[RMDB]
RNA sequence: GGGAACGACUCGAGUAGAGUCGAAAAGACGCUGAUGCGAUCGACUGUAAGAUAGAUACACUGAGAAGACAGAUACGUACGGCAAGUAUCGUCGCCAGAAUUACAGUCGCAAAUUGCCGUACGAAGACGUCCAUAGUAAUUUCGAUUACUAUGGACGAAAAGAAACAACAACAACAAC
Reactivity to DMS in 0.01 (KOAc 150mM, MgCl2 10mM, bicine 150mM(pH8.5), 24C), signal-to-noise 5, nucleotides 027 to 126: g010a140c040g020c030u000g010a110u030g030c030g020a150u040c010g000a020c000u000g010u010a020a010g010a140u030a170g000a150u020a110c220a250c030u010g000a070g000a100a100g000a030c020a090g010a100u010a060c010g000u010a000c000g000g000c010a010a040g010u010a020u000c020g030u010c000g010c080c030a050g000a100a140u010u000a000c000a010g000u000c000g020c230a020a050a090u000u000g000c000c000g010u000a060c100g010a070a110g020a190
Reactivity to 2A3 in 0.01 (KOAc 150mM, MgCl2 10mM, bicine 150mM(pH8.5), 24C), signal-to-noise 9, nucleotides 027 to 126: g080a010c030g010c090u190g080a150u240g030c020g060a100u060c010g000a010c000u000g010u020a020a020g050a130u160a070g110a060u160a130c090a030c060u050g040a030g040a270a050g040a020c050a030g050a050u070a130c010g020u020a000c000g010g000c010a040a010g020u040a030u070c030g010u010c010g030c040c010a050g040a040a010u040u020a010c000a010g000u000c010g000c030a050a080a020u030u010g000c000c000g000u000a020c030g020a040a010g050a020